[RMDB]
RNA sequence: GGGAACGACUCGAGUAGAGUCGAAAAGCGUUCGGAUAACGAGGGAUGAAGAGGUCACGGACGAACGGAAACGUGAAAGUUUAAAGCGUGAAGUUGACCGUGUAUUAGCUCAGAGCGGGCUUAUAAAGGGUUAUUCAAUCUUCGGAUUGAAUAACCCAAAAGAAACAACAACAACAAC
Reactivity to 2A3 in 0.01 (KOAc 150mM, MgCl2 10mM, bicine 150mM(pH8.5), 24C), signal-to-noise 1, nucleotides 027 to 126: g050c000g030u020u020c010g000g020a040u040a020a000c010g030a030g050g000g060a010u050g030a020a070g090a000g080g080u120c020a010c010g000g000a010c110g070a020a000c000g000g000a000a010a010c000g000u090g070a130a190a190g000u050u110u090a000a000a060g090c000g000u000g000a020a000g000u000u010g000a140c010c020g000u000g000u000a060u000u100a010g000c000u000c000a010g000a040g180c000g000g000g020c000u110u010a150u170a160a150a020
Reactivity to DMS in 0.01 (KOAc 150mM, MgCl2 10mM, bicine 150mM(pH8.5), 24C), signal-to-noise 2, nucleotides 027 to 126: g030c100g010u010u020c100g000g010a100u000a070a000c060g000a030g000g000g010a040u000g010a050a040g000a060g000g010u000c050a040c000g030g000a150c070g000a000a000c000g000g000a080a090a010c010g000u000g000a070a090a160g030u010u060u000a120a100a210g000c010g000u000g000a290a080g000u000u010g000a110c010c000g000u010g000u010a000u000u030a030g000c030u030c090a140g000a160g000c050g010g000g030c010u000u000a060u040a020a070a030